[RMDB]
RNA sequence: GGGAACGACUCGAGUAGAGUCGAAAAGUGCGGGUGGACCUGAAGGUAAAUUUCCAGAAGCAGAAUUACCAGGUCGGGGUAUAUGCGUUUGUAUUUACGUAAUGCUUGAGCUUCUGUGAUGAUAAUCGCACUGCAUCAUGUUCGCAUGAUGCAGUGCAAAAGAAACAACAACAACAAC
Reactivity to DMS in 0.01 (KOAc 150mM, MgCl2 10mM, bicine 150mM(pH8.5), 24C), signal-to-noise 1, nucleotides 027 to 126: g040u000g040c030g000g000g030u000g000g000a100c060c010u010g000a160a110g020g030u020a040a080a110u000u000u000c020c000a070g000a070a020g000c050a150g000a080a080u000u000a050c040c050a120g030g030u010c040g010g000g000g000u000a030u030a040u000g000c020g030u010u010u000g000u030a130u000u000u000a020c040g020u000a040a030u000g000c030u010u000g000a120g000c010u000u000c010u010g000u010g020a050u000g010a140u000a090a080u010c130
Reactivity to 2A3 in 0.01 (KOAc 150mM, MgCl2 10mM, bicine 150mM(pH8.5), 24C), signal-to-noise 1, nucleotides 027 to 126: g090u040g010c020g030g060g030u100g030g000a020c010c060u080g020a100a010g040g020u110a090a120a180u100u080u000c020c010a010g000a030a000g030c000a020g050a190a070u100u030a050c000c000a020g060g040u030c000g000g000g020g000u060a140u020a010u150g060c000g010u000u020u070g110u050a230u020u190u050a020c050g010u020a030a030u050g020c030u050u130g080a030g000c000u000u000c000u030g090u050g050a050u050g040a020u100a170a060u100c050